[RMDB]
RNA sequence: GGGAACGACUCGAGUAGAGUCGAAAAGAUUAGGCAGAUAACAACUUUUACGCGUCUUGCCACUGUAUUGUAAAGUAAACAACAAGAUAUAAGUUUAAUACACCUACGCGACAAGAUGAAUCAGCAAUGAUAACUGUAGUUUCGACUACAGUUAUCAAAAAGAAACAACAACAACAAC
Reactivity to 2A3 in 0.01 (KOAc 150mM, MgCl2 10mM, bicine 150mM(pH8.5), 24C), signal-to-noise 6, nucleotides 027 to 126: g050a020u120u160a060g030g000c040a020g050a110u080a140a050c050a030a050c030u060u070u090u190a070c070g000c010g010u000c010u030u040g010c000c010a020c040u060g030u020a080u090u050g080u080a050a110a110g030u010a050a050a010c020a020a020c020a040a060g070a080u090a030u040a210a050g000u000u030u040a070a030u050a030c010a010c020c020u030a020c030g000c000g020a010c010a020a010g000a040u050g010a030a060u060c030a010g030c040a040a150
Reactivity to DMS in 0.01 (KOAc 150mM, MgCl2 10mM, bicine 150mM(pH8.5), 24C), signal-to-noise 7, nucleotides 027 to 126: g000a130u010u010a070g010g020c030a050g010a080u000a070a090c100a060a090c070u000u000u000u010a110c140g010c060g020u000c010u000u000g010c040c010a090c060u010g010u000a020u010u010g010u000a050a060a140g010u000a020a020a030c060a060a130c130a080a090g000a090u000a080u010a040a110g000u000u000u000a030a070u000a050c060a040c130c090u000a030c040g010c030g000a030c050a020a040g000a030u010g000a080a060u000c080a050g010c130a060a100